This 177-nucleotide RNA was probed chemically with DMS and 2A3. The reactions ran in a buffer of 150 mM KOAc, 10 mM MgCl2 and 150 mM bicine (pH 8.5), at 24 C. 2A3 adducts were read by reverse transcription with SuperScript II with manganese. Values cover nucleotides 27 to 126.
[RMDB]
RNA sequence: GGGAACGACUCGAGUAGAGUCGAAAAACGGUCGGUACGCCGACCGAAACUCUAGCUGCCAAAGGCGCUUCUCCUUCUGAACAGAGCGCUUUGCUCAGCCAGUGUAGACGGUCAGUACGCUGACCGACUAAUAGUCCUUCUUCGGAAGGACUAUUAGAAAAGAAACAACAACAACAAC
Reactivity to DMS in 0.01 (KOAc 150mM, MgCl2 10mM, bicine 150mM(pH8.5), 24C), signal-to-noise 9, nucleotides 027 to 126: a110c020g000g000u000c000g010g010u010a190c170g020c030c020g000a010c000c000g010a010a040a050c010u000c000u000a090g010c010u000g010c300c040a110a020a010g000g010c000g010c000u000u030c040u000c120c160u010u020c180u030g000a120a130c290a050g000a020g010c000g000c010u000u000u000g010c220u010c000a020g000c010c050a020g010u010g000u020a040g000a280c000g000g000u000c000a030g010u010a180c160g020c010u000g010a010c000c000g010a080
Reactivity to 2A3 in 0.01 (KOAc 150mM, MgCl2 10mM, bicine 150mM(pH8.5), 24C), signal-to-noise 9, nucleotides 027 to 126: a000c010g000g000u010c010g000g010u040a030c230g050c050c020g010a000c000c000g000a030a010a000c010u010c010u020a010g000c000u000g010c020c020a050a050a060g160g010c010g010c010u180u110c020u080c020c050u250u240c130u230g070a100a050c030a070g010a000g000c000g000c000u000u000u010g010c040u020c020a000g000c010c010a030g010u030g070u170a060g040a120c010g000g000u010c000a010g010u050a030c210g010c130u050g000a000c000c000g000a000